[RMDB]
RNA sequence: GGGAACGACUCGAGUAGAGUCGAAAAGUCCGGCGGGGGCGACCCCAGGGAAAGUGCCACAGAGAGCAAACCGCCAUGCCUUGCAUGGUAAGGGUGAAAGGGUGGGGUAAGAGCCCACCGCGCCGCUGAUGUAUAUACCCUUCGGGGUAUAUACAUCAAAAGAAACAACAACAACAAC
Reactivity to DMS in 0.01 (KOAc 150mM, MgCl2 10mM, bicine 150mM(pH8.5), 24C), signal-to-noise 1, nucleotides 027 to 126: g000u000c030c010g010g040c050g020g010g030g010g000c100g000a130c050c020c000c020a150g020g010g000a030a060a130g000u010g030c020c040a060c110a110g000a100g010a140g010c010a010a100a070c000c020g010c000c010a040u000g010c000c180u010u010g000c020a000u000g010g000u020a030a070g010g010g000u010g010a070a120a060g030g000g000u000g010g010g000g010u010a070a160g000a250g010c000c000c010a010c010c010g010c050g000c020c060g000c180u010
Reactivity to 2A3 in 0.01 (KOAc 150mM, MgCl2 10mM, bicine 150mM(pH8.5), 24C), signal-to-noise 2, nucleotides 027 to 126: g040u020c010c040g030g040c010g000g020g010g030g010c000g030a030c000c000c020c020a010g020g010g040a140a200a030g110u110g080c030c010a090c110a080g180a010g010a020g090c020a070a040a040c000c000g000c030c000a010u010g010c010c120u180u300g000c010a000u000g000g000u070a110a200g040g000g010u100g020a060a050a050g080g010g020u030g000g040g000g000u060a100a040g050a050g170c000c000c030a070c000c000g020c000g010c010c010g060c050u000